[RMDB]
RNA sequence: GGGAACGACUCGAGUAGAGUCGAAAAUCCUUCUAUGCCUUCUUUCGCCACCUGUUGAGGUCUUUCUUCUGAAACAAAGAAGAAAUAGACAAAUCAGACUUGCCCUCUUGGAAAUGUGGUCCAGAUUAACUUUAACUAAGUUCGCUUAGUUAAAGUUAAAAGAAACAACAACAACAAC
Reactivity to DMS in 0.01 (KOAc 150mM, MgCl2 10mM, bicine 150mM(pH8.5), 24C), signal-to-noise 7, nucleotides 027 to 126: u000c010c010u000u010c080u010a080u010g000c040c020u000u000c040u010u020u000c050g010c050c040a070c060c020u000g010u000u010g000a110g010g020u000c020u010u000u000c000u000u000c010u000g000a120a130a130c290a100a140a040g000a010a010g000a010a020a050u020a060g000a020c040a050a090a090u000c050a060g010a080c060u000u000g010c020c020c020u000c040u010u000g000g000a060a060a100u010g020u000g000g010u000c020c030a110g010a190u000u000
Reactivity to 2A3 in 0.01 (KOAc 150mM, MgCl2 10mM, bicine 150mM(pH8.5), 24C), signal-to-noise 9, nucleotides 027 to 126: u010c010c000u030u030c060u080a090u120g020c010c000u040u040c010u050u090u070c030g030c010c010a060c010c020u030g030u100u070g080a060g040g040u000c000u010u010u000c000u000u000c000u010g090a130a110a080c080a060a230a020g010a000a000g020a010a020a020u160a030g020a010c010a010a080a030u080c020a020g060a100c020u030u050g020c010c010c000u020c020u040u040g040g050a060a110a090u120g060u050g050g020u010c010c020a040g000a100u020u010